[RMDB]
RNA sequence: GGGAACGACUCGAGUAGAGUCGAAAAGAAAGUGUGCACUUGAUACCGCGUGACUUCGGUCACGUAGUGGCAUCGCGCAGGACUUUGCUGCCACUACUUAGUCCUGAGGUAUCUUGUGCUCACGAAAGCUAUCGUCGCCUUUCGAGGCGACGAUAGCAAAAGAAACAACAACAACAAC
Reactivity to 2A3 in 0.01 (KOAc 150mM, MgCl2 10mM, bicine 150mM(pH8.5), 24C), signal-to-noise 1, nucleotides 027 to 126: g110a000a100a090g000u010g020u010g030c000a000c000u000u010g010a000u020a000c000c000g010c000g000u020g000a000c000u030u140c260g160g000u000c050a000c000g000u000a000g080u010g010g070c030a050u200c060g050c020g000c030a000g070g040a020c050u000u090u230g040c060u110g000c000c010a040c010u070a000c000u050u260a010g030u030c010c000u010g000a000g030g000u000a000u000c000u000u010g000u010g010c010u000c000a000c000g000a050a020a000
The record gives the reactivity of an RNA of 177 nucleotides to 2A3. 2A3 is a SHAPE reagent: it acylates the 2'-hydroxyl of flexible nucleotides of all four kinds.